Description:
The record gives the reactivity of an RNA of 177 nucleotides to 2A3 and DMS. It was measured as part of the RMDB library OK2TST.
RNA sequence: GGGAACGACUCGAGUAGAGUCGAAAACGUGGCCAGUGGCGUCAACAACAGCCUUAGCCUCGAACAUGAGUGGGUCUACGUGUAGGUUGGCUAUACCCACCGCGCUCCACAGGGCCAUGACGCCGGCACCUCCUAAGUUAUUCGUAACUUAGGAGGUAAAAGAAACAACAACAACAAC
Reactivity to 2A3 in 0.01 (KOAc 150mM, MgCl2 10mM, bicine 150mM(pH8.5), 24C), signal-to-noise 9, nucleotides 027 to 126: c030g020u060g060g010c020c030a070g040u090g100g020c020g020u040c020a030a050c020a030a020c010a080g020c000c010u050u090a040g030c020c020u050c060g070a120a060c050a130u190g020a050g080u040g000g030g010u060c090u110a060c090g030u050g070u110a110g030g070u060u100g040g020c050u070a030u110a160c000c000c000a010c010c010g000c010g000c010u040c020c000a040c020a040g030g010g000c000c000a010u030g010a010c010g010c020c000g030g010c020
Reactivity to DMS in 0.01 (KOAc 150mM, MgCl2 10mM, bicine 150mM(pH8.5), 24C), signal-to-noise 9, nucleotides 027 to 126: c080g020u000g020g010c000c080a180g040u010g010g010c010g010u000c060a060a090c180a090a100c240a120g000c010c010u000u000a110g010c050c030u000c100g000a070a090c090a060u000g010a120g020u000g000g010g000u000c060u010a060c120g010u000g010u000a050g010g010u000u000g010g010c090u000a090u000a070c020c000c010a040c040c040g010c090g010c040u000c010c090a050c080a080g000g000g000c010c040a140u000g000a050c050g020c010c010g010g020c110